[RMDB]
RNA sequence: GGGAACGACUCGAGUAGAGUCGAAAACGGAAGGGGCGCACUCUCGAGCACGGUGUCCUUCUCACCGUAUGUCGCCGAGGCCACGAGCUCGUAUCGCCCGUCGGGCACCUCCAUGGUGAGGAGCCGCCAUCUUCACGUCAUUCGUGACGUGAAGAUGAAAAGAAACAACAACAACAAC
Reactivity to DMS in 0.01 (KOAc 150mM, MgCl2 10mM, bicine 150mM(pH8.5), 24C), signal-to-noise 5, nucleotides 027 to 126: c090g010g010a160a080g010g000g000g000c020g020c300a090c110u000c100u000c020g020a050g020c020a130c060g000g000u000g000u000c090c060u000u010c070u000c050a080c110c080g000u000a090u000g020u010c130g020c060c140g010a070g020g000c030c040a060c000g010a100g020c040u000c040g020u000a070u000c020g000c010c010c000g010u000c060g030g000g000c010a090c010c000u000c010c010a220u020g030g010u020g010a020g010g020a050g000c030c000g010c180
Reactivity to 2A3 in 0.01 (KOAc 150mM, MgCl2 10mM, bicine 150mM(pH8.5), 24C), signal-to-noise 4, nucleotides 027 to 126: c040g080g070a060a090g060g000g010g000c010g010c050a070c060u090c020u030c050g010a010g020c020a010c050g050g040u050g000u130c050c000u150u040c060u030c020a030c000c020g060u110a120u260g130u090c030g010c070c050g050a090g030g040c020c010a060c050g010a020g010c000u000c030g020u040a070u130c010g020c000c010c000g010u040c030g000g000g000c020a040c020c000u000c020c030a300u300g160g000u300g040a000g010g000a000g020c000c010g000c030